[RMDB]
RNA sequence: GGGAACGACUCGAGUAGAGUCGAAAAGAUGCGAUGCACAUGCGGUAGACCAUCGGGUACAUUCCUCUGGUCUCCGUUACCACUUGUUGGGUAGGGAGCCGAUGGUUACUUCAGUACGGCCGAAACACCCAUCAUUAUCGUUCGCGAUAAUGAUGGGAAAAGAAACAACAACAACAAC
Reactivity to DMS in 0.01 (KOAc 150mM, MgCl2 10mM, bicine 150mM(pH8.5), 24C), signal-to-noise 4, nucleotides 027 to 126: g000a130u010g030c050g010a070u000g000c050a040c060a100u000g020c040g000g010u000a030g010a030c020c000a010u010c070g010g000g010u010a130c200a180u000u000c040c020u000c150u000g000g020u000c000u000c030c010g020u000u010a040c010c010a050c090u010u010g010u010u010g010g000g020u020a030g000g010g010a050g040c020c000g010a030u010g010g010u000u010a050c050u000u000c060a080g000u000a060c110g010g010c020c040g000a130a110a100c200a140
Reactivity to 2A3 in 0.01 (KOAc 150mM, MgCl2 10mM, bicine 150mM(pH8.5), 24C), signal-to-noise 3, nucleotides 027 to 126: g130a020u100g040c070g080a070u100g020c030a040c010a070u060g020c030g000g060u080a030g050a070c010c000a030u010c000g030g000g030u120a100c040a130u100u090c030c030u090c090u060g050g000u030c020u000c010c000g030u030u030a020c010c010a060c090u150u200g120u120u130g120g000g000u030a010g030g020g010a030g010c010c000g020a020u040g000g000u020u060a060c000u050u050c010a020g040u050a070c060g050g000c020c010g020a060a040a000c050a060